[RMDB]
RNA sequence: GGGAACGACUCGAGUAGAGUCGAAAAAUUGCAACGGAUAACUCAGCUCUGGUUGAGGCGGCAUUUAUGCAUCUGAAAGAGAAGGGUUUAAACCGUUUUGCUUUUUAUGGUUUGCCGGCCAGUAGUGCCUUUAGUUCGGUUUCGACCGAACUAAAGGAAAAGAAACAACAACAACAAC
Reactivity to DMS in 0.01 (KOAc 150mM, MgCl2 10mM, bicine 150mM(pH8.5), 24C), signal-to-noise 2, nucleotides 027 to 126: a030u010u000g020c000a060a040c020g010g010a130u010a010a020c010u010c000a090g000c010u000c010u010g000g010u010u010g000a100g000g030c110g020g000c110a080u020u000u010a050u030g030c000a080u000c000u000g010a120a100a010g000a030g010a030a040g000g010g000u000u000u000a050a090a110c020c000g000u000u000u000u000g010c000u000u000u000u000u010a100u010g010g000u000u030u010g020c110c020g000g010c010c030a090g030u020a090g030u000g010
Reactivity to 2A3 in 0.01 (KOAc 150mM, MgCl2 10mM, bicine 150mM(pH8.5), 24C), signal-to-noise 1, nucleotides 027 to 126: a000u080u030g000c000a010a010c030g000g000a040u030a160a000c020u010c010a010g060c000u000c000u050g180g000u150u170g040a000g030g000c060g030g000c040a040u130u260u080a180u200g000c000a000u020c010u100g000a060a060a010g020a010g000a030a000g000g000g000u010u060u070a080a090a030c000c000g000u020u020u060u060g000c000u000u060u000u010u060a150u080g020g020u040u080u100g040c000c020g030g020c000c000a020g040u160a030g050u050g060
Source: RMDB library OK2TST, as collected in RNAgym. The record gives the reactivity of an RNA of 177 nucleotides to DMS and 2A3. For 2A3 the reverse transcriptase was SuperScript II with manganese. The reactions ran in a buffer of 150 mM KOAc, 10 mM MgCl2 and 150 mM bicine (pH 8.5), at 24 C. The DMS profile rests on 2,538 reads. The 2A3 profile rests on 1,119 reads.